[RMDB]
RNA sequence: GGGAACGACUCGAGUAGAGUCGAAAAAUCACAGGAACUUCCACUUCUAAAGUUACUAGCAGUACCUCGAUUCCUUUGACGUCGACCAACCGUACCUCUACUACUUUUACUUCUUCAACCAGUAUUAGUACAUCUAGUAGUUCUACUGCCACUUCGAUCAGUAGGGACGGUUCGCCGUCCCUACUGAAAAAGAAACAACAACAACAAC
Reactivity to 2A3 in 0.01 (KOAc 150mM, MgCl2 10mM, bicine 150mM(pH8.5), 24C), signal-to-noise 1, nucleotides 027 to 156: a000u060c060a030c000a020g010g200a000a000c030u070u100c020c000a000c040u090u080c060u160a180a230a120g060u170u030a090c100u050a060g060c030a030g050u050a040c020c080u110c140g030a160u020u050c000c000u070u110u270g060a010c030g000u060c020g020a010c000c010a040a060c000c010g000u010a100c100c000u020c020u000a030c000u000a030c000u080u000u010u010a000c070u060u150c000u010u090c050a140a080c030c000a100g010u040a040u100u050a060g030u000a060c050a180u000c110u010a120g000u000a000g030u160u010c000u030a070c030u160g010c020c010a090c060u080u100c000g020a020